[RMDB]
Notes
An RNA of 177 nucleotides, treated with DMS and 2A3 and read out base by base. The reactions ran in a buffer of 150 mM KOAc, 10 mM MgCl2 and 150 mM bicine (pH 8.5), at 24 C. The data come from the RNA Mapping Database (RMDB), library OK1LIB.
RNA sequence: GGGAACGACUCGAGUAGAGUCGAAAAGAGUCUUUUGGAAUUGCCAUGUCUUUCUUGGGUUGAUCUCAGGAACGUGUAUGGCUGGUUUGAUGUUUAUGUUGAACUGAGAAAAAGAAGGGUACAUAUCCUUACAGAAUUUAUUCGUAAAUUCUGUAAGAAAAGAAACAACAACAACAAC
Reactivity to DMS in 0.01 (KOAc 150mM, MgCl2 10mM, bicine 150mM(pH8.5), 24C), signal-to-noise 7, nucleotides 027 to 126: g000a110g010u010c010u000u000u010u000g010g020a100a090u040u040g010c010c010a020u010g000u000c010u000u000u000c000u000u000g000g000g010u010u030g000a110u050c000u010c010a010g000g000a000a010c090g000u020g010u010a010u000g000g000c010u010g000g000u000u000u000g010a030u010g010u020u020u030a070u050g020u010u000g000a040a040c010u000g000a160g010a100a040a030a040a060g000a050a080g000g010g000u030a060c110a090u020a060u020c070
Reactivity to 2A3 in 0.01 (KOAc 150mM, MgCl2 10mM, bicine 150mM(pH8.5), 24C), signal-to-noise 9, nucleotides 027 to 126: g050a010g040u060c030u050u140u090u110g090g100a160a110u140u130g010c000c000a020u020g030u000c010u010u010u000c000u010u010g030g000g040u080u280g180a140u130c010u000c000a010g010g020a020a020c030g080u100g030u090a000u020g000g000c020u010g010g010u030u040u050g050a050u040g090u060u150u100a190u190g020u030u030g030a030a020c030u040g020a010g130a140a080a020a010a000g090a030a030g050g010g030u090a030c020a070u140a050u070c010